[RMDB]
RNA sequence: GGGAACGACUCGAGUAGAGUCGAAAAUCCCAUAGGUUGCCGAAUCCGAAAGGUACGGAGGAACCGCUUUUUGGGGUUAAUCUGCAGUGAAGCUGCAGUAGGGAUACCUUCUGUCCCGCACCCGACAGCUAACUCCGAAGGCAAUAAAGGAAGGAGACGUAGCAGUAUAUUUCGAUAUACUGCUACGAAAAGAAACAACAACAACAAC
Reactivity to DMS in 0.01 (KOAc 150mM, MgCl2 10mM, bicine 150mM(pH8.5), 24C), signal-to-noise 3, nucleotides 027 to 156: u000c000c000c000a200u000a090g010g000u000u010g000c000c030g000a180a290u000c040c010g010a110a170a210g010g030u000a180c060g010g010a140g020g000a140a100c090c100g000c080u000u000u000u000u000g010g010g010g020u000u000a080a110u000c000u000g040c000a020g020u000g010a170a230g030c030u000g010c010a030g000u000a050g020g000g030a050u000a030c030c070u000u000c020u000g000u010c240c000c000g000c110a060c020c000c010g040a110c080a050g010c020u000a130a230c010u000c020c000g000a120a160g000g000c050a040a050u000a030a110a110g000g010a130a050g010g020a300g010a240
Reactivity to 2A3 in 0.01 (KOAc 150mM, MgCl2 10mM, bicine 150mM(pH8.5), 24C), signal-to-noise 3, nucleotides 027 to 156: u010c000c000c000a020u100a030g100g010u020u030g010c020c000g020a040a090u030c010c000g040a090a060a040g000g010u010a020c000g000g030a010g010g020a060a100c060c030g030c050u120u130u020u080u240g050g000g000g000u000u030a030a040u040c000u000g000c000a000g000u050g290a180a030g100c000u010g020c000a000g000u010a010g020g000g000a010u080a130c010c000u020u020c010u020g010u000c010c000c000g000c010a040c000c000c010g030a090c100a030g000c010u030a050a030c000u000c000c000g040a090a010g000g000c010a000a010u090a060a050a020g030g000a020a010g010g010a030g010a010
Source information:
This 207-nucleotide RNA was probed chemically with DMS and 2A3. For 2A3, 2,681 sequencing reads were counted. Conditions: 150 mM KOAc, 10 mM MgCl2 and 150 mM bicine (pH 8.5), 24 C.